[RMDB]
RNA sequence: GGGAACGACUCGAGUAGAGUCGAAAACAGAAUGCAGCCACGAAGAGGUGCUCAGUCAUGGGAUAUAUGGAGGCUAGCAUCGACAAACUGCCGAGGCUCAUGUCUGGAAGGUGCAUGUGUGGCACAGGAGCAGUCGCACUUUCGAGUGCGACUGCUCAAAAGAAACAACAACAACAAC
Reactivity to 2A3 in 0.01 (KOAc 150mM, MgCl2 10mM, bicine 150mM(pH8.5), 24C), signal-to-noise 1, nucleotides 027 to 126: c020a000g190a240a000u000g000c300a000g000c000c000a100c000g000a090a000g000a000g230g000u000g000c000u000c000a000g000u000c000a000u180g010g000g010a000u220a140u170a020u260g300g000a030g000g000c000u210a170g280c000a000u260c000g000a070c160a020a300a100c000u000g050c050c000g000a000g000g000c000u000c000a000u030g020u220c000u000g000g160a290a000g050g000u020g020c000a000u210g140u000g030u000g050g000c000a000c000a000g250